The record gives the reactivity of an RNA of 207 nucleotides to 2A3 and DMS.
Values cover nucleotides 27 to 156.
For DMS, 2,030 sequencing reads were counted.
The data come from the RNA Mapping Database (RMDB), library OK3TST.
For DMS the reverse transcriptase was MarathonRT.
For 2A3, 1,085 sequencing reads were counted.

RNA sequence: GGGAACGACUCGAGUAGAGUCGAAAACACUCCAGCCUGGGCAACAGAGCAAGACUCCAUCAGGGAAAAAAAAAAAGUAUUUGAUGAAUGAAUUAAUGAAAACGUGUAGCUGGGGUCGAAGUGAAUGACUGAAAUGGCACAAGUCUGGGAAAACAGAGCAUAGGAGUAUAUUCGUAUACUCCUAUGCAAAAGAAACAACAACAACAAC
Reactivity to 2A3 in 0.01 (KOAc 150mM, MgCl2 10mM, bicine 150mM(pH8.5), 24C), signal-to-noise 1, nucleotides 027 to 156: c040a010c020u000c000c000a020g030c000c020u080g030g020g000c040a070a080c040a080g040a010g020c010a010a070g020a080c000u000c020c020a050u050c040a030g080g050g000a050a000a000a010a030a030a000a000a000a000a060g040u030a060u060u120u050g020a030u020g040a100a120u040g000a020a030u070u140a060a060u170g080a110a130a000a000c070g020u040g000u090a030g000c030u020g000g000g030g000u010c030g030a050a010g000u020g090a080a100u150g020a010c020u050g000a050a010a120u090g020g000c040a030c030a160a000g040u000c060u050g020g000g050a000a010a020a080c070a040g050a030
Reactivity to DMS in 0.01 (KOAc 150mM, MgCl2 10mM, bicine 150mM(pH8.5), 24C), signal-to-noise 1, nucleotides 027 to 156: c110a130c000u010c000c070a130g010c020c010u000g010g080g010c010a070a100c030a120g010a120g010c030a040a150g000a210c070u000c030c050a020u000c000a140g000g000g000a010a000a020a000a000a000a010a040a090a100a120g020u030a060u000u000u000g000a130u000g000a020a090u010g030a070a140u000u020a100a030u000g000a040a050a080a060c030g000u000g030u000a030g000c040u000g000g040g020g020u010c030g000a080a090g050u000g040a040a060u010g010a110c010u010g000a040a000a030u000g000g000c060a010c030a030a040g000u000c000u050g010g010g020a050a060a030a080c090a130g010a150